[RMDB]
RNA sequence: GGGAACGACUCGAGUAGAGUCGAAAAUGCCUAAUUCAAGGAAUUAGCGUGCCUUCAUGCUAAGGGUUUGAUAUCUGCUAAAACCCGGUGCAUUCAUCAAUGCAGGUUAAGCCAAAGGGAUGUCCCUAAAAGAACGCAAGGUUCGCCUUGCGUUCAACAAUCCUAGUCAGUUCGCUGACUAGGAUUGAAAAGAAACAACAACAACAAC
Reactivity to DMS in 0.01 (KOAc 150mM, MgCl2 10mM, bicine 150mM(pH8.5), 24C), signal-to-noise 5, nucleotides 027 to 156: u010g010c030c010u000a050a090u000u000c060a120a160g010g020a100a110u000u000a040g020c040g020u000g000c050c030u000u000c050a080u000g020c040u000a300a220g000g010g010u000u010u000g000a190u000a040u000c060u000g000c100u000a110a030a040a040c010c010c010g010g060u000g030c020a060u000u000c080a100u010c090a110a150u000g000c030a040g010g010u000u010a060a120g020c010c030a040a110a150g000g000g010a130u000g000u000c010c000c010u000a020a060a110a160g000a020a010c000g020c000a020a020g010g020u010u010c300g030c010c000u000u000g000c000g010u010u000c000a040a080